[RMDB]
RNA sequence: GGGAACGACUCGAGUAGAGUCGAAAACGUAAAGGGCUGGCAACAGAACGUCUCCCGCUGCUCCGUCCGGCGGCACCCAAUCUGACCUGGUCUGAUGAUUUCGUCAUGGACGCAUUGGCCACCGGUCCGUCACUCCCAAGUUCGCUUGGGAGUGACGAAAAGAAACAACAACAACAAC
Reactivity to DMS in 0.01 (KOAc 150mM, MgCl2 10mM, bicine 150mM(pH8.5), 24C), signal-to-noise 1, nucleotides 027 to 126: c090g030u000a030a090a090g000g000g000c020u010g020g020c130a120a080c110a120g000a060a130c130g000u000c050u000c070c010c010g000c100u000g000c100u000c100c060g010u010c060c030g020g000c010g000g010c040a110c010c020c040a030a110u010c110u040g010a030c020c010u000g000g030u000c010u000g000a050u000g000a140u000u010u000c040g000u000c090a130u010g000g010a020c080g000c100a050u000u010g000g040c030c040a100c100c110g010g010u000c040
Reactivity to 2A3 in 0.01 (KOAc 150mM, MgCl2 10mM, bicine 150mM(pH8.5), 24C), signal-to-noise 1, nucleotides 027 to 126: c020g040u060a060a030a190g070g000g020c020u000g040g000c040a100a010c000a110g080a130a020c030g030u000c010u040c020c000c000g010c030u010g020c010u030c030c020g090u000c000c020g000g000c000g000g000c040a040c040c010c000a030a060u010c140u090g030a010c010c010u020g000g010u100c040u070g070a040u020g020a030u030u200u120c050g010u040c050a110u130g090g000a000c010g020c000a040u000u100g000g000c010c020a050c060c070g010g000u000c000